[RMDB]
RNA sequence: GGGAACGACUCGAGUAGAGUCGAAAAGCGUCAGACAAAGAUGAGGAAUUAGACCAGAGUAAAUCAGCAGGCAGCCUCCGCUAAAGCAGAAAUUCCAUUAUUGAGGAGACUGACUCAACUAGUUAUCGACCCUUACUGCAUUCGUGCAGUAAGGGUCAAAAGAAACAACAACAACAAC
Reactivity to DMS in 0.01 (KOAc 150mM, MgCl2 10mM, bicine 150mM(pH8.5), 24C), signal-to-noise 2, nucleotides 027 to 126: g020c130g010u000c050a090g000a120c180a020a110a180g000a010u000g030a120g010g000a070a080u000u020a020g000a140c050c050a110g000a110g010u000a050a050a040u010c070a100g020c100a060g020g010c040a060g040c010c000u000c010c020g020c080u000a070a090a060g030c070a050g020a030a130a120u000u000c080c040a150u000u000a100u000u020g000a090g010g010a080g000a050c040u000g000a070c030u000c060a060a060c180u000a000g000u000u010a110u010c150
Reactivity to 2A3 in 0.01 (KOAc 150mM, MgCl2 10mM, bicine 150mM(pH8.5), 24C), signal-to-noise 1, nucleotides 027 to 126: g000c020g010u040c030a000g030a200c010a030a050a000g040a050u040g000a090g160g030a030a050u090u050a140g040a040c020c090a030g000a000g220u160a030a130a130u060c030a020g040c000a000g030g000c000a000g050c030c010u010c020c020g070c060u120a080a040a000g000c000a000g050a080a100a060u120u060c030c000a040u130u130a080u070u250g060a090g020g030a010g030a030c010u070g040a040c000u000c000a080a090c080u070a070g250u180u110a090u150c080